[RMDB]
Structure probing data (2A3) for a 207-nucleotide construct.
RNA sequence: GGGAACGACUCGAGUAGAGUCGAAAAGGGGUCGCAACGAUAAGCGAGACAGAGCGAAGAACACCACUGAAGCCUCCACGGUGGUGGGAGCUCUCGUUUCGCUUUUGACGUUGCGACGGAGGCACCCAAAAGUAGCACUGGUUCGCCAGUGCUACAACGAUUAAUUUCGCUUCGGCGAAAUUAAUCGAAAAGAAACAACAACAACAAC
Reactivity to 2A3 in 0.01 (KOAc 150mM, MgCl2 10mM, bicine 150mM(pH8.5), 24C), signal-to-noise 1, nucleotides 027 to 156: g000g020g060g020u000c000g020c010a020a010c020g080a220u170a300a030g000c010g000a010g010a000c000a000g000a010g010c000g070a160a010g000a000a000c010a010c000c020a000c000u010g040a120a010g020c000c000u000c000c000a010c010g020g000u000g010g000u000g010g000g000a000g030c000u010c000u000c020g000u020u000u010c010g000c030u010u000u020u050g010a030c010g000u000u000g000c000g000a000c020g000g000a000g000g000c000a030c010c000c010a060a110a000a020g010u010a000g000c010a020c000u020g010g000u080u020c220g080c080c030a000g000u010g000c000u010a000c000a000a000

Description: The reactions ran in a buffer of 150 mM KOAc, 10 mM MgCl2 and 150 mM bicine (pH 8.5), at 24 C. As a SHAPE reagent, 2A3 marks flexible, mostly unpaired nucleotides at the ribose 2'-OH.